This 207-nucleotide RNA was probed chemically with 2A3. 2A3 adducts were read by reverse transcription with SuperScript II with manganese. The RNA was probed in 150 mM KOAc, 10 mM MgCl2 and 150 mM bicine (pH 8.5) at 24 C. Reactivities are rounded to 0.1 and cut off at 0 and 3. For 2A3, 840 sequencing reads were counted. It was measured as part of the RMDB library RNAMAK.

RNA sequence: GGGAACGACUCGAGUAGAGUCGAAAAUCUCCAUUCGUGGAGAAUAGUAGCGUACUACAUGUACCAGGGCAUCUACCCACCAUGGCUCCCAAAUAGGAGCCAUGAGGAUGAACUACCCUGUGUACAUGUAUCGCCGGCAGCUACAUUCGUGUAGCAACGGUUAGGAACACUUCGGUGUUCCUAACCGAAAAGAAACAACAACAACAAC
Reactivity to 2A3 in 0.01 (KOAc 150mM, MgCl2 10mM, bicine 150mM(pH8.5), 24C), signal-to-noise 2, nucleotides 027 to 156: u010c000u030c000c010a020u050u100c160g110u050g000g000a020g070a020a040u220a110g270u140a060g000c020g030u060a110c130u030a000c080a000u000g020u010a000c000c000a000g000g000g000c020a020u000c000u010a070c000c000c090a060c080c080a020u020g000g000c010u060c000c000c000a130a180a000u300a160g000g000a000g040c000c000a000u000g000a000g000g000a000u030g000a070a020c070u080a040c200c000c000u000g060u020g020u040a000c000a000u000g000u050a000u010c010g010c010c000g190g020c060a080g020c000u040a010c020a040u070u100c150g150u090g000u010a000g000c000a000a080